[RMDB]
RNA sequence: GGGAACGACUCGAGUAGAGUCGAAAAGAAUGGCGAAAGCGAGGAGCUCCGGGUGGAUAUUUUUUCCCUGAACGUUCCGCAGGAAGCAUCCUUCGCGGGACCUGCACCGUGAUGGAUGCAAAAAGAAGUAACCAUAUUUCUUCGGAAAUAUGGUUACAAAAGAAACAACAACAACAAC
Reactivity to DMS in 0.01 (KOAc 150mM, MgCl2 10mM, bicine 150mM(pH8.5), 24C), signal-to-noise 2, nucleotides 027 to 126: g000a100a040u020g000g020c010g000a060a080a170g020c080g010a090g000g000a150g000c070u000c070c100g000g010g050u000g010g000a050u010a000u000u000u000u000u000u000c030c010c000u000g000a050a230c020g010u010u000c000c020g000c080a120g000g000a130a120g010c010a000u000c000c020u000u020c010g020c010g010g000g000a080c050c060u010g000c020a110c000c010g040u000g010a020u000g010g010a010u000g000c000a010a020a020a080a030g000a070a130
Reactivity to 2A3 in 0.01 (KOAc 150mM, MgCl2 10mM, bicine 150mM(pH8.5), 24C), signal-to-noise 2, nucleotides 027 to 126: g000a020a040u130g030g010c010g060a140a060a050g010c020g020a050g050g040a030g040c070u000c030c020g060g010g020u100g020g030a040u030a150u080u200u020u010u070u040c040c000c000u010g050a110a010c020g050u040u000c010c020g030c010a020g090g070a080a030g030c000a010u010c000c000u030u000c010g000c000g000g020g040a070c060c020u080g020c020a040c010c010g000u000g020a010u000g000g000a000u010g000c020a030a000a000a090a000g050a070a020